[RMDB]
RNA sequence: GGGAACGACUCGAGUAGAGUCGAAAAGGUGGGAGUUCUCAGACUUGUCGGUGCCUUGCGAGAGCGAAGCUUCUAGAAAAGCAGAGGAGAAUCGGAUGUCUCCAUACAAGUCGCGGGGUUUGCAAGCCUAUGGUGCGGGGUUCGCCCCGCACCAUAGAAAAGAAACAACAACAACAAC
Reactivity to 2A3 in 0.01 (KOAc 150mM, MgCl2 10mM, bicine 150mM(pH8.5), 24C), signal-to-noise 2, nucleotides 027 to 126: g180g000u100g000g090g000a070g020u100u000c090u000c000a060g010a050c000u050u060g000u110c080g010g060u070g000c060c050u040u080g000c010g090a050g020a010g130c170g040a100a030g000c020u050u030c060u210a070g130a060a160a020a000g000c010a010g070a100g230g000a020g000a040a020u210c070g070g060a120u300g110u010c000u090c000c000a010u120a100c060a020a020g010u010c000g060c000g030g000g000g000u070u050u100g070c060a030a020g010c040
Reactivity to DMS in 0.01 (KOAc 150mM, MgCl2 10mM, bicine 150mM(pH8.5), 24C), signal-to-noise 1, nucleotides 027 to 126: g010g030u000g000g000g000a160g010u040u000c040u010c000a080g000a050c080u000u000g050u000c060g000g000u050g000c110c080u000u010g010c050g020a110g030a100g000c040g040a180a140g000c000u000u020c140u020a190g060a090a060a020a050g040c010a160g020a100g000g000a090g020a000a000u000c110g010g000a130u000g000u000c030u000c000c020a030u060a080c140a050a070g000u000c010g000c100g030g000g010g000u000u060u120g030c030a020a130g000c110